RNA sequence: GGGAACGACUCGAGUAGAGUCGAAAACCUCCAGAGUUCGCUCUGGAGGAAAAGCUUGCGUCCUAAUCUAUCCCGGGUUAUGGCGCGAAACUCAGGGAAAAAAAAGGUACGGCUUCGGCCGUACCAAGACAAGUACGUAGUUCGCUACGUACUUGUCAAAAGAAACAACAACAACAAC
Reactivity to DMS in 0.01 (KOAc 150mM, MgCl2 10mM, bicine 150mM(pH8.5), 24C), signal-to-noise 1, nucleotides 027 to 126: c000c000u000c010c000a010g000a020g010u000u000c270g010c000u010c000u000g010g000a010g010g010a010a040a040a150g030c190u010u000g020c000g010u010c000c030u000a010a000u000c010u010a110u000c000c000c020g030g010g000u000u000a010u000g000g000c000g000c010g010a020a060a060c120u000c060a070g020g020g000a000a010a000a050a040a060a090a070g000g010u000a020c000g000g000c000u000u040c160g020g010c000c000g020u000a000c000c010a040a000
Reactivity to 2A3 in 0.01 (KOAc 150mM, MgCl2 10mM, bicine 150mM(pH8.5), 24C), signal-to-noise 2, nucleotides 027 to 126: c000c000u000c000c010a000g000a000g020u060u110c170g050c050u000c000u000g000g010a000g000g000a010a030a010a020g070c110u140u120g000c010g010u010c000c000u010a020a010u000c000u010a070u030c000c000c000g000g000g010u000u010a020u030g000g000c000g000c000g010a070a010a010c120u150c150a160g080g000g000a050a040a030a020a020a020a030a160g010g000u010a000c000g000g010c020u050u160c200g090g000c000c000g000u000a000c000c000a010a000

Structure probing data (DMS and 2A3) for a 177-nucleotide construct.
The DMS profile rests on 1,559 reads.
The 2A3 profile rests on 4,025 reads.
Source: RMDB library M2PK50, as collected in RNAgym.